[RMDB]
RNA sequence: GGGAACGACUCGAGUAGAGUCGAAAAUGGGCUACCAGUAAGCGAAAAAUGAUACAGGACUAAAAAAACAUAAUUCGAGAUUUUUCAGGAUGGAUUUUUUUAGGUAUCUAUCAAAACUAUUCUGAUGCAACGUAGAGCACGUUCGCGUGCUCUACAAGAUUUAUGAAAUCUUCGGAUUUCAUAAAUCAAAAGAAACAACAACAACAAC
Reactivity to 2A3 in 0.01 (KOAc 150mM, MgCl2 10mM, bicine 150mM(pH8.5), 24C), signal-to-noise 1, nucleotides 027 to 156: u050g010g020g000c010u010a030c000c000a010g020u140a020a020g020c020g120a120a020a030a070a050u100g010a060u110a120c040a050g080g030a030c040u090a060a000a030a040a010a050a030c050a050u190a090a060u070u050c050g010a020g010a240u090u150u110u210u200c020a000g000g000a000u010g010g030a010u000u000u030u030u000u010u000a030g010g020u120a080u090c010u010a000u010c040a000a020a020a000c010u020a050u060u060c010u030g020a040u070g040c030a060a040c090g000u010a000g000a000g020c000a000c010g000u000u020c010g030c000g040u000g000c000u000c000u000a000c000a000a000